[RMDB]
RNA sequence: GGGAACGACUCGAGUAGAGUCGAAAAGAUAUGGACCCAUGGAGGCGAUGGCAGGCGUUGAAAUCGGAAACGAUGGAGCCUGCAUCGUGAAGUGGGUCCUAAGUCAAACCCCUGCUUCGGCAGGGAACUAGAACAGUACGUUCGCGUACUGUUCUAGAAAAGAAACAACAACAACAAC
Reactivity to DMS in 0.01 (KOAc 150mM, MgCl2 10mM, bicine 150mM(pH8.5), 24C), signal-to-noise 3, nucleotides 027 to 126: g010a070u010a300u000g000g010a010c000c000c000a010u000g000g010a260g010g000c000g000a010u000g020g010c000a020g000g020c000g020u000u010g000a060a110a020u010c000g010g010a140a090a250c020g010a000u000g000g000a120g000c000c000u000g000c000a000u000c000g000u000g000a250a190g000u000g000g000g020u000c000c000u000a010a060g000u000c040a100a090a130c160c010c000c000u000g000c000u000u010c210g020g010c000a010g000g010g010a010a040
Reactivity to 2A3 in 0.01 (KOAc 150mM, MgCl2 10mM, bicine 150mM(pH8.5), 24C), signal-to-noise 3, nucleotides 027 to 126: g020a000u060a020u140g010g000a000c000c020c010a000u000g030g020a090g270g130c020g000a010u040g290g180c010a000g000g020c000g250u300u040g030a020a020a010u010c010g000g050a070a040a040c010g000a010u020g000g020a010g010c000c000u000g000c000a000u000c010g000u100g010a030a000g010u020g020g000g000u000c000c000u000a010a000g000u010c020a010a020a090c020c000c020c010u000g020c000u040u080c170g170g000c000a010g020g000g000a000a050